[RMDB]
Chemical mapping of a 207-nucleotide RNA with 2A3.
RNA sequence: GGGAACGACUCGAGUAGAGUCGAAAAGACCAAACAAUGGAAUAUACACCGCUUGAAAUUGACACAAACGUAUUGCAGCUAAUUACAAGUAAUAACUUUUCAACUGCUCAAAUUGCUAAGGCGUUACGUGUACCUAGCUAUAAACUAGGUGUAAAUACUGACGCAUGAUGUUCGCAUCAUGCGUCAGAAAAGAAACAACAACAACAAC
Reactivity to 2A3 in 0.01 (KOAc 150mM, MgCl2 10mM, bicine 150mM(pH8.5), 24C), signal-to-noise 1, nucleotides 027 to 156: g060a000c100c000a160a000a030c060a010a140u230g170g020a060a010u000a010u020a060c060a000c030c020g000c060u030u040g020a030a020a090u200u180g150a120c160a040c000a060a120a000c010g080u160a030u130u180g000c080a030g010c000u020a090a110u080u100a090c020a020a000g020u050a050a100u050a050a110c010u160u050u200u210c100a110a060c080u000g000c000u040c000a000a060a270u090u100g000c000u020a110a020g040g000c000g010u000u020a030c050g000u030g000u030a050c000c000u000a000g030c050u100a130u270a300a050a000c000u000a040g000g040u010g010u050a020a020a000u110a030

It was measured as part of the RMDB library OK3TST. 2A3 adducts were read by reverse transcription with SuperScript II with manganese.